[RMDB]
RNA sequence: GGGAACGACUCGAGUAGAGUCGAAAAGGGACUUGCCCGAUGAAGCCCGGCAACCUAACUUUAUUUAAGCGUAAAGUGAAGGUGCUAAUUCCAGCAAAAUGGUGUAUUCCGUUUUGGUAGAUAAGAGAAGCGUGACAUGAGUUCGCUCAUGUCACAAGGGAUAACAGAAGUUCGCUUCUGUUAUCCCAAAAGAAACAACAACAACAAC
Reactivity to DMS in 0.01 (KOAc 150mM, MgCl2 10mM, bicine 150mM(pH8.5), 24C), signal-to-noise 2, nucleotides 027 to 156: g000g040g010a110c080u000u000g030c040c040c020g000a140u010g000a140a090g000c020c020c010g000g050c030a050a020c000c000u010a150a000c000u000u000u000a010u010u000u000a070a200g000c300g010u020a010a030a020g020u000g000a110a050g000g000u000g010c010u000a070a190u000u010c030c000a090g000c000a010a000a030a000u000g010g040u000g000u000a060u010u000c010c010g040u000u000u000u000g000g000u020a010g020a070u000a090a170g010a140g000a110a120g000c070g030u010g020a030c000a030u000g010a050g050u000u000c300g030c010u000c000a000u000g010u000c000a000c000a020a110
Reactivity to 2A3 in 0.01 (KOAc 150mM, MgCl2 10mM, bicine 150mM(pH8.5), 24C), signal-to-noise 4, nucleotides 027 to 156: g030g000g000a060c030u050u050g070c000c020c060g020a030u110g060a040a060g030c020c020c020g000g000c030a110a080c000c010u010a000a000c000u020u010u050a060u060u130u130a180a030g080c040g020u000a010a000a000g000u020g080a090a000g010g010u000g000c000u010a000a040u080u020c040c010a010g010c010a090a000a010a030u020g000g030u060g070u190a120u140u080c020c020g010u000u010u010u030g020g050u070a120g080a200u180a190a060g060a040g050a140a040g090c060g080u000g010a000c000a000u010g010a000g010u030u080c150g030c040u000c000a000u000g010u010c000a000c000a010a000
Chemical mapping of a 207-nucleotide RNA with DMS and 2A3. The 2A3 profile rests on 2,542 reads. In probing experiments dimethyl sulfate is read out at A N1 and C N3, which are open when not base-paired.